[RMDB]
RNA sequence: GGGAACGACUCGAGUAGAGUCGAAAAGCUGCGCGUUCAUGGUGCGGGCGGCGUCGAGGGCGCUGGUGCCCGCGCUGUCCCGCGCUUGUAGGUCGGCGCCUCGCUCCAGCAGCAACUCCAGAAUGUCCGAUGGGGUGAAGUUCGCUUCACCCCAUCGAAAAGAAACAACAACAACAAC
Reactivity to 2A3 in 0.01 (KOAc 150mM, MgCl2 10mM, bicine 150mM(pH8.5), 24C), signal-to-noise 1, nucleotides 027 to 126: g020c000u000g000c040g000c020g120u080u130c080a060u180g020g020u000g000c010g000g020g030c040g000g000c010g010u040c080g120a140g000g060g000c050g070c300u300g260g230u280g030c010c010c060g000c020g000c000u010g010u140c040c010c000g000c010g000c000u000u050g010u080a020g000g050u060c060g020g080c030g000c000c000u010c020g000c030u020c020c020a020g000c000a010g000c010a040a030c010u000c050c000a060g060a160a050u180g100u000c070
Reactivity to DMS in 0.01 (KOAc 150mM, MgCl2 10mM, bicine 150mM(pH8.5), 24C), signal-to-noise 2, nucleotides 027 to 126: g030c010u000g000c040g000c120g010u000u000c060a100u010g010g020u000g010c010g010g010g000c000g010g000c000g020u000c200g000a120g010g020g010c000g020c240u010g000g000u000g020c020c000c000g000c000g000c010u010g010u000c000c000c010g040c010g010c010u000u010g030u010a110g010g010u020c040g000g000c110g000c020c090u000c090g010c040u000c030c050a270g030c010a040g000c020a070a060c070u030c030c020a200g000a070a090u000g000u000c090